[RMDB]
RNA sequence: GGGAACGACUCGAGUAGAGUCGAAAAGAUAUGGAGAUGUCGGGAGAGAGAGUAUCGGAAACGAUACGAUCUCGAGGAUCGAGCAUCUCCUAAGUCAAACAAAUUCUGGGUUCGCCCAGAAUUUGAACUGAAGCAUAGACUUCGGUCUAUGCUUCAGAAAAGAAACAACAACAACAAC
Reactivity to DMS in 0.01 (KOAc 150mM, MgCl2 10mM, bicine 150mM(pH8.5), 24C), signal-to-noise 1, nucleotides 027 to 126: g010a020u000a090u000g000g000a010g060a000u000g000u010c000g000g010g000a030g030a040g000a030g000a300g020u000a000u010c000g030g000a000a020a120c000g000a000u000a000c010g000a150u000c000u000c020g000a090g010g000a010u010c000g000a080g010c010a030u000c030u000c010c010u000a000a040g000u010c010a170a160a220c010a020a000a000u000u000c000u000g000g000g000u000u010c290g030c000c000c000a020g010a000a000u000u000u000g000a070a190